The record gives the reactivity of an RNA of 177 nucleotides to DMS and 2A3. The DMS profile rests on 3,727 reads. For DMS the reverse transcriptase was MarathonRT. The reactions ran in a buffer of 150 mM KOAc, 10 mM MgCl2 and 150 mM bicine (pH 8.5), at 24 C.
[RMDB]
RNA sequence: GGGAACGACUCGAGUAGAGUCGAAAAGAAGAGUAAGCAGGUGUACGACUACCGCACGGUCGUCAGGAGAUUUGACGAAAUUACACAACAGUCCGACGAGGUUGUGGCGAACUAUCCGGAUGGGACGUGUAAACAUAGCGUUCGCGCUAUGUUUACAAAAAGAAACAACAACAACAAC
Reactivity to DMS in 0.01 (KOAc 150mM, MgCl2 10mM, bicine 150mM(pH8.5), 24C), signal-to-noise 4, nucleotides 027 to 126: g000a060a070g000a080g020u000a050a100g010c050a030g010g010u000g010u010a080c060g010a050c050u010a100c080c050g010c070a080c090g000g000u010c040g000u010c030a060g000g010a110g000a100u000u000u000g010a070c040g010a060a100a090u010u010a070c080a080c100a040a090c120a130g000u010c020c030g020a070c090g000a160g000g010u000u010g010u010g010g010c070g000a040a060c070u000a060u020c030c020g020g000a060u000g000g010g000a050c180g000
Reactivity to 2A3 in 0.01 (KOAc 150mM, MgCl2 10mM, bicine 150mM(pH8.5), 24C), signal-to-noise 1, nucleotides 027 to 126: g030a010a000g050a000g060u030a000a070g020c030a000g000g040u020g020u070a020c040g020a000c050u050a040c020c030g010c070a020c030g010g050u020c010g000u010c000a020g030g090a130g020a100u090u120u110g020a020c000g000a050a020a000u160u100a040c060a000c000a180a000c000a040g050u020c020c030g050a070c050g030a050g000g030u050u030g040u050g020g000c000g000a010a010c010u000a080u080c030c030g060g030a050u060g100g020g000a010c100g050